RNA sequence: GGGAACGACUCGAGUAGAGUCGAAAAGCAAAUAAAAACAAAAAGUCGAUACAAUGCAGGUAGUGAUAUGUGCAUCUACUGCAAUGAAGCGACUUAAAGCACAUAAAGUACGAAAGUACAAAAAAAACUAUUAUGACUAGUUCGCUAGUCAUAAUAGAAAAGAAACAACAACAACAAC
Reactivity to DMS in 0.01 (KOAc 150mM, MgCl2 10mM, bicine 150mM(pH8.5), 24C), signal-to-noise 3, nucleotides 027 to 126: g020c100a060a120a110u030a060a100a080a060a110c050a070a080a120a050a020g030u000c000g000a130u020a170c100a060a070u000g000c000a010g000g010u010a000g010u010g000a130u010a020u000g020u030g010c030a100u000c000u000a010c010u010g000c010a030a070u020g020a150a070g000c010g000a020c030u010u000a040a090a140g030c040a050c070a010u000a060a060a090g010u000a010c020g000a120a050a120g010u000a000c010a010a000a010a020a080a060a060a120
Reactivity to 2A3 in 0.01 (KOAc 150mM, MgCl2 10mM, bicine 150mM(pH8.5), 24C), signal-to-noise 3, nucleotides 027 to 126: g040c020a070a070a080u240a130a170a050a030a040c060a030a140a030a020a020g000u010c000g020a000u070a240c040a080a040u020g020c010a010g110g060u130a010g020u030g040a040u020a060u270g100u090g030c000a010u010c020u020a010c000u000g000c010a000a050u070g040a100a010g060c000g010a000c000u020u030a050a020a000g010c020a000c000a060u080a090a110a020g000u010a010c010g060a120a040a010g000u010a010c000a010a030a000a000a010a000a010a010
Conditions: 150 mM KOAc, 10 mM MgCl2 and 150 mM bicine (pH 8.5), 24 C.
An RNA of 177 nucleotides, treated with DMS and 2A3 and read out base by base.
DMS (dimethyl sulfate) methylates the pairing face of unpaired adenines and cytosines.
Source: RMDB library M2PK90, as collected in RNAgym.
The 2A3 profile rests on 4,153 reads.
The DMS profile rests on 2,336 reads.